[RMDB]
RNA sequence: GGGAACGACUCGAGUAGAGUCGAAAAGGGUGAUGUCUCCUAACCUUUAUCAAUGGGGGCACUCGAUCGUGCUGUGGGUAGAAAUUUUAUUUCGUGCCUACCUUAGACGCUUGUCGUCGGGAGUAUGUGGGACUGAUGAACUUCGGUUCAUCAGUAACUCACCGGCAUGUUUCGACAUGCCGGUGAGAAAAGAAACAACAACAACAAC
Reactivity to 2A3 in 0.01 (KOAc 150mM, MgCl2 10mM, bicine 150mM(pH8.5), 24C), signal-to-noise 1, nucleotides 027 to 156: g040g030g020u060g080a060u000g020u000c030u010c050c020u000a080a120c000c020u150u110u130a120u280c060a000a070u110g000g000g000g000g000c000a030c000u070c020g090a050u100c060g020u070g060c050u010g020u090g010g010g010u070a020g110a050a020a010u130u230u170u170a050u000u170u000c090g010u100g000c000c010u020a020c010c000u060u100a020g010a000c080g050c050u170u300g130u130c000g000u010c000g000g010g030a060g020u070a040u190g020u050g000g010g000a000c000u000g000a000u000g000a020a000c010u000u080c180g000g000u000u010c000a000u000c000a020g000u000a000a000